[RMDB]
RNA sequence: GGGAACGACUCGAGUAGAGUCGAAAAGCCGAGACUGCACAGGUGCUGGGCCUCACCCCCUGGAUGGACUAUGAGUUCCGGGUCAUAGCCAGCAACAUUCUGGGCACUGGGGAGCCUAGUGGGCCCUCCAGCAAAAUCCGGACCAGGGAAGCAGGUACAUCCUAUAGCGAUUCGUCGCUAUAGGAUGAAAAGAAACAACAACAACAAC
Reactivity to 2A3 in 0.01 (KOAc 150mM, MgCl2 10mM, bicine 150mM(pH8.5), 24C), signal-to-noise 2, nucleotides 027 to 156: g030c000c030g000a030g020a040c060u040g010c040a030c010a090g000g000u050g040c040u100g060g030g040c000c000u050c030a030c000c000c000c000c000u010g000g030a080u040g020g090a110c030u040a090u140g040a010g170u040u150c030c030g080g000g000u010c010a020u070a020g010c000c010a060g050c050a030a090c020a120u100u120c030u030g000g020g010c040a010c020u000g000g000g020g000a010g000c010c020u120a130g120u260g020g010g000c020c000c000u000c000c000a010g030c060a100a010a000a070u010c000c000g010g010a010c010c000a010g030g010g000a020a030g000c030a010g000g030u040a010
Reactivity to DMS in 0.01 (KOAc 150mM, MgCl2 10mM, bicine 150mM(pH8.5), 24C), signal-to-noise 1, nucleotides 027 to 156: g020c000c000g010a120g000a130c040u000g000c030a120c050a190g000g000u000g020c010u030g010g020g050c030c030u020c060a110c040c010c040c010c010u030g000g010a170u010g040g000a050c030u000a060u000g000a080g030u000u000c120c080g020g000g000u010c060a080u010a070g000c010c010a160g040c070a070a090c090a150u020u010c030u020g020g090g080c150a030c000u010g000g020g000g030a050g020c010c010u000a180g090u000g030g020g020c020c000c070u000c020c030a000g000c000a020a020a070a130u000c010c010g030g000a120c060c000a010g030g000g000a090a070g030c040a070g030g020u000a250